[RMDB]
RNA sequence: GGGAACGACUCGAGUAGAGUCGAAAAAUGGAACAGCACCUGGUACGUCAGUCAUAAAACAAAUGUUACCUGAAGGAACGGUCAUUAUUGACUUAGAUAUCAGGGAAUUCACAUCAGAUGCAAACCAUGACUGAAUCUCUUUCGAGAGAUUCAGUCAAAAAGAAACAACAACAACAAC
Reactivity to DMS in 0.01 (KOAc 150mM, MgCl2 10mM, bicine 150mM(pH8.5), 24C), signal-to-noise 2, nucleotides 027 to 126: a060u030g000g010a030a150c220a160g010c010a100c020c000u000g010g020u000a080c070g010u000c190a060g000u000c090a050u000a060a030a080a000c100a040a050a080u000g030u000u050a150c020c000u010g000a050a100g010g000a240a150c300g000g000u010c010a020u000u000a190u020u000g020a020c000u010u000a020g000a280u050a000u000c000a000g010g000g000a040a100u010u000c210a040c000a030u010c020a030g000a060u000g000c000a090a040a120c000c000a110
Reactivity to 2A3 in 0.01 (KOAc 150mM, MgCl2 10mM, bicine 150mM(pH8.5), 24C), signal-to-noise 2, nucleotides 027 to 126: a000u040g000g020a050a000c020a030g040c010a010c010c000u010g000g020u030a020c050g040u020c040a040g020u080c010a000u110a150a130a020a030c090a050a150a030u150g030u050u070a080c010c020u060g030a070a040g040g040a060a050c060g020g020u000c000a010u000u300a080u140u100g000a000c000u000u010a020g010a060u020a010u030c000a010g010g010g020a010a040u110u080c080a050c000a180u010c000a000g000a060u010g000c040a060a050a000c020c010a040
An RNA of 177 nucleotides, treated with DMS and 2A3 and read out base by base. 2A3 is a SHAPE reagent: it acylates the 2'-hydroxyl of flexible nucleotides of all four kinds. The DMS profile rests on 860 reads. The 2A3 profile rests on 1,445 reads. For 2A3 the reverse transcriptase was SuperScript II with manganese. Values cover nucleotides 27 to 126.